Structure probing data (2A3) for a 177-nucleotide construct. As a SHAPE reagent, 2A3 marks flexible, mostly unpaired nucleotides at the ribose 2'-OH. The 2A3 profile rests on 375 reads. Source: RMDB library OK1LIB, as collected in RNAgym.
RNA sequence: GGGAACGACUCGAGUAGAGUCGAAAAGCCACUGCAUUUUCUUGUGCUUUGAAAUCGUAUAACGGUGCAAUUGGUGUAACCCCAGACAAGACUCCAUGUGGUACUGUUUUAGAAGCAUUAAAAUUACUACCAUGGUGGCGUUCGCGCCACCAUGGUAAAAAGAAACAACAACAACAAC
Reactivity to 2A3 in 0.01 (KOAc 150mM, MgCl2 10mM, bicine 150mM(pH8.5), 24C), signal-to-noise 1, nucleotides 027 to 126: g000c010c000a080c210u160g000c000a080u000u010u000u180c050u050u120g000u020g010c000u090u000u040g120a110a050a030u290c060g040u110a090u100a000a280c000g000g000u000g000c020a100a160u040u040g000g000u000g030u100a080a190c010c010c000c000a000g020a020c060a120a070g010a060c000u000c090c020a030u170g030u080g080g100u030a030c030u030g070u000u000u000u160a090g040a090a000g000c000a000u010u260a100a000a000a000u030u060a040c060